[RMDB]
RNA sequence: GGGAACGACUCGAGUAGAGUCGAAAAGAAAGAAAGAAAGAGCUCCCUGAGACCCUUUGAUUGUCUCGUUAAACAUAAUUCUAUAUGUUAAAUGUAAUCAGGCAGCCAAAGUGACUCAGGUGUGCAAUUUGUAAAUUGGGUUCGCCCAAUUUACAAAAAAAGAAACAACAACAACAAC
Reactivity to 2A3 in 0.01 (KOAc 150mM, MgCl2 10mM, bicine 150mM(pH8.5), 24C), signal-to-noise 4, nucleotides 027 to 126: g110a030a050a000g060a060a110a000g060a010a080a010g120a020g010c000u020c020c020c000u010g010a020g030a100c030c000c000u010u010u000g010a010u010u000g000u030c000u000c060g010u020u040a080a040a000c000a010u060a070a130u250u150c110u200a210u030a020u160g020u010u050a080a120a070u100g040u100a010a070u070c000a000g000g000c000a000g000c000c000a010a000a000g020u020g050a050c000u000c000a000g000g020u050g010u000g050c020a020a040
Reactivity to DMS in 0.01 (KOAc 150mM, MgCl2 10mM, bicine 150mM(pH8.5), 24C), signal-to-noise 3, nucleotides 027 to 126: g000a100a030a180g000a180a080a100g000a070a050a170g050a170g010c000u000c220c000c000u030g000a030g000a090c010c120c000u040u000u000g000a030u000u000g000u000c000u000c200g020u000u010a100a030a030c000a000u000a020a150u060u040c190u030a190u020a020u000g000u000u020a080a060a040u050g000u080a010a080u010c160a030g000g000c000a010g020c020c000a010a000a020g020u000g000a090c000u000c010a010g000g020u010g040u000g000c030a060a050